[RMDB]
RNA sequence: GGGAACGACUCGAGUAGAGUCGAAAAACAACAUGUGCUCAACUUCGAAUAUUCCACCCUGAUGUGCAUGAUGCAGAGCUGCCUCGUAUUUUGGUGGAUCACAACACACAAACGUGUCAUGUGGUCGCCUGAGCGUAGAUUUCGAUCUACGCUCAGGAAAAGAAACAACAACAACAAC
Reactivity to DMS in 0.01 (KOAc 150mM, MgCl2 10mM, bicine 150mM(pH8.5), 24C), signal-to-noise 2, nucleotides 027 to 126: a080c200a090a120c060a130u020g000u020g010c050u000c030a050a080c080u000u020c040g070a070a170u010a090u000u020c040c010a070c000c040c080u010g000a080u060g010u000g000c060a020u000g040a060u010g000c020a040g000a070g000c030u020g000c000c010u000c110g020u030a070u010u020u040u000g020g020u000g010g050a010u000c000a000c030a000a000c090a020c000a140c160a060a030a070c280g000u000g000u010c170a150u010g000u000g000g030u010c000g000
Reactivity to 2A3 in 0.01 (KOAc 150mM, MgCl2 10mM, bicine 150mM(pH8.5), 24C), signal-to-noise 6, nucleotides 027 to 126: a000c070a000a010c020a060u100g020u020g030c010u030c040a080a080c040u100u080c040g120a110a040u130a110u180u040c020c030a080c020c020c010u050g060a100u090g040u060g030c040a050u090g030a070u110g070c050a010g030a030g090c040u050g030c020c020u060c030g080u120a160u040u200u050u120g070g020u050g050g000a000u000c000a000c000a000a050c000a000c000a010c060a080a290a110c160g000u000g010u050c050a060u050g000u010g010g010u000c010g030

Conditions: 150 mM KOAc, 10 mM MgCl2 and 150 mM bicine (pH 8.5), 24 C.
Structure probing data (DMS and 2A3) for a 177-nucleotide construct.
2A3 adducts were read by reverse transcription with SuperScript II with manganese.
DMS adducts were read by reverse transcription with MarathonRT.
As a SHAPE reagent, 2A3 marks flexible, mostly unpaired nucleotides at the ribose 2'-OH.
It was measured as part of the RMDB library OK1LIB.